[RMDB]
RNA sequence: GGGAACGACUCGAGUAGAGUCGAAAAGCUGGCGAUCGGCAACAAUCUGGUCGUCGAGGCGCCCCAUGCGGGCGCGUCGGUUCGGGUCAGCUCGCUGGGCAACAACGUGCAGAUUCGGCGACCGCUGCCAGUGGACCUUAUUCGUAAGGUCCACUGGAAAAGAAACAACAACAACAAC
Reactivity to 2A3 in 0.01 (KOAc 150mM, MgCl2 10mM, bicine 150mM(pH8.5), 24C), signal-to-noise 2, nucleotides 027 to 126: g060c050u080g020g030c020g060a070u060c010g070g040c020a140a010c050a060a190u080c100u100g020g000u010c010g000u000c020g020a070g050g000c000g000c000c000c000c000a060u300g020c070g000g000g000c030g010c000g040u040c030g000g020u170u110c040g040g020g050u090c040a010g000c000u020c020g020c020u080g010g040g020c060a150a100c020a060a040c190g040u090g030c050a010g030a170u070u000c000g040g010c010g010a000c000c010g010c040u080g040
Reactivity to DMS in 0.01 (KOAc 150mM, MgCl2 10mM, bicine 150mM(pH8.5), 24C), signal-to-noise 2, nucleotides 027 to 126: g000c000u000g000g030c020g050a020u000c000g000g020c100a100a160c210a100a270u060c110u000g000g030u000c000g000u000c000g020a050g010g000c060g040c030c000c020c020a020u050g030c070g040g040g000c000g050c140g010u020c050g020g040u080u000c000g020g000g040u020c050a080g020c020u000c040g010c040u020g000g010g000c260a120a080c050a010a030c150g000u020g000c030a080g000a120u030u000c040g010g020c050g000a020c010c040g000c000u010g040